[RMDB]
This 177-nucleotide RNA was probed chemically with DMS and 2A3.
The reactions ran in a buffer of 150 mM KOAc, 10 mM MgCl2 and 150 mM bicine (pH 8.5), at 24 C.
DMS adducts were read by reverse transcription with MarathonRT.
RNA sequence: GGGAACGACUCGAGUAGAGUCGAAAAGAAUAUGUUUUCUAAGUGUCUAAUGAUGAGUUUCAUAGGGCAGAUUCUGAGAUGAAAAUUUACUUCAUCAUUGAUACUCCUACUAUGAAAUCUGAAGACACUAAAACUCAAUUUUCGAAUUGAGUUUUAGAAAAGAAACAACAACAACAAC
Reactivity to DMS in 0.01 (KOAc 150mM, MgCl2 10mM, bicine 150mM(pH8.5), 24C), signal-to-noise 9, nucleotides 027 to 126: g010a120a110u040a070u010g000u010u000u010u000c010u010a090a090g010u000g010u000c000u000a150a170u030g000a120u010g010a070g010u010u000u000c000a000u000a000g010g000g010c240a020g000a300u000u000c010u000g000a100g010a010u000g000a010a010a070a130u020u040u040a100c210u010u000c000a000u000c000a050u010u000g000a020u000a260c040u000c120c010u000a120c020u010a000u000g000a000a020a040u000c000u000g010a150a020g000a010c000a010
Reactivity to 2A3 in 0.01 (KOAc 150mM, MgCl2 10mM, bicine 150mM(pH8.5), 24C), signal-to-noise 9, nucleotides 027 to 126: g050a030a070u240a050u160g040u010u070u030u010c040u040a120a060g020u000g000u020c010u010a120a140u110g070a030u050g040a040g150u020u030u000c000a000u000a000g010g010g000c070a020g010a050u110u000c010u040g070a060g010a160u020g070a010a040a060a060u210u290u120a120c070u020u000c000a000u000c000a040u030u120g010a010u030a140c010u000c000c010u110a300c000u000a010u000g000a010a010a000u000c010u010g030a030a000g000a000c000a000